This 177-nucleotide RNA was probed chemically with DMS and 2A3. High DMS reactivity at an A or C suggests that its Watson-Crick edge is free. The 2A3 profile rests on 967 reads.

[RMDB]
RNA sequence: GGGAACGACUCGAGUAGAGUCGAAAAGACGAUCCUCAUGGGUAAGUAGAUUGAGGUAAUUAUGCGCCAGCUCGUUACUGAGAAUAUUCGUGCCGUCAUUAAUCCGCAGAAUGCAAAUCCCCACCGGACUCCGAACGUGAUUCGUCACGUUCGGAGUAAAAGAAACAACAACAACAAC
Reactivity to DMS in 0.01 (KOAc 150mM, MgCl2 10mM, bicine 150mM(pH8.5), 24C), signal-to-noise 1, nucleotides 027 to 126: g010a050c030g020a030u010c010c030u000c000a080u000g000g010g010u080a050a100g010u000a080g000a090u010u000g000a120g000g000u020a020a050u030u040a060u080g010c030g070c050c180a080g000c050u030c160g000u000u030a070c070u000g000a150g040a060a120u000a040u000u010c120g000u020g010c040c000g000u000c120a050u000u020a020a130u010c090c010g000c040a020g010a020a010u020g000c080a020a150a040u020c020c040c040c040a110c110c100g000g000
Reactivity to 2A3 in 0.01 (KOAc 150mM, MgCl2 10mM, bicine 150mM(pH8.5), 24C), signal-to-noise 2, nucleotides 027 to 126: g070a000c040g000a030u000c000c000u000c000a030u120g040g090g050u200a110a120g010u010a080g070a220u030u030g020a000g010g010u030a030a010u110u130a040u100g070c020g000c010c000a000g000c010u010c060g050u060u050a020c030u060g030a000g010a220a130u130a080u220u010c000g050u070g040c020c000g050u050c000a020u010u180a040a040u000c000c000g020c020a010g010a130a000u050g030c060a000a000a040u050c000c030c000c000a040c020c040g000g010